[RMDB]
RNA sequence: GGGAACGACUCGAGUAGAGUCGAAAAUGCAGGCACCGUCGUGACCGGAUUCCUUGACUCACUUUGUGUGCGCGUUGAUUGCGCACGGCCACCUUCCGCUCAGACCGGCGCGGAGGUGUAGCGAUAGCCUAUAUCGUGUCUUCGGACACGAUAUAGGAAAAGAAACAACAACAACAAC
Reactivity to 2A3 in 0.01 (KOAc 150mM, MgCl2 10mM, bicine 150mM(pH8.5), 24C), signal-to-noise 4, nucleotides 027 to 126: u150g010c050a050g190g000c020a010c020c020g130u080c050g030u020g070a300c000c000g010g010a060u070u040c020c010u030u140g040a050c020u020c060a050c010u090u120u160g170u080g000u010g050c010g000c030g040u040u200g250a210u130u140g000c000g000c010a000c000g000g010c010c000a020c000c000u070u090c020c010g000c010u060c040a060g030a200c000c030g010g010c010g000c030g010g000a010g000g000u000g000u010a020g000c010g070a070u120a040g020
Reactivity to DMS in 0.01 (KOAc 150mM, MgCl2 10mM, bicine 150mM(pH8.5), 24C), signal-to-noise 4, nucleotides 027 to 126: u010g020c050a110g010g010c060a050c040c070g010u000c040g010u000g010a130c040c020g000g000a150u000u000c050c030u000u010g000a050c070u010c060a050c100u010u000u010g010u010g010u000g000c000g030c020g000u020u000g000a160u020u000g010c010g010c010a020c010g000g000c080c010a020c020c010u000u010c010c020g000c030u000c080a090g000a120c110c080g000g010c130g020c030g010g000a010g000g000u000g010u000a040g020c020g000a140u010a130g010